[RMDB]
RNA sequence: GGGAACGACUCGAGUAGAGUCGAAAAGAUAUGGAUUGACUGGAGUACGUGCGUCCUUUGAUCGCUGCAUUUCGGAAACGAAAUGCAGCGGGAGGACGCCCGUACGUUGAAAGUCAAUCCUAAGUCACUAAUAGACAUAGUUCGCUAUGUCUAUUAGAAAAGAAACAACAACAACAAC
Reactivity to 2A3 in 0.01 (KOAc 150mM, MgCl2 10mM, bicine 150mM(pH8.5), 24C), signal-to-noise 2, nucleotides 027 to 126: g040a010u160a050u150g010g000a000u020u000g000a020c020u010g040g070a050g030u010a000c020g020u000g010c000g010u000c020c000u100u090u130g300a280u220c030g000c070u040g060c030a060u050u010u030c000g120g080a190a170a210c050g000a040a050a010u010g000c030a010g020c000g000g000g000a000g000g020a000c010g040c000c000c000g050u010a010c000g000u020u000g000a020a050a000g000u010c000a000a010u000c000c000u000a100a040g010u000c000a000
Reactivity to DMS in 0.01 (KOAc 150mM, MgCl2 10mM, bicine 150mM(pH8.5), 24C), signal-to-noise 2, nucleotides 027 to 126: g000a040u000a300u010g000g000a030u000u000g010a020c000u000g000g000a090g010u000a010c000g010u010g000c010g000u000c000c010u010u000u010g010a150u010c010g040c000u000g000c000a010u000u010u000c000g020g000a110a080a300c020g040a000a000a010u020g020c010a000g030c000g010g000g000a010g010g010a030c000g010c000c060c000g020u000a000c010g000u000u010g000a190a160a040g010u000c000a010a010u000c000c000u000a020a100g010u000c040a300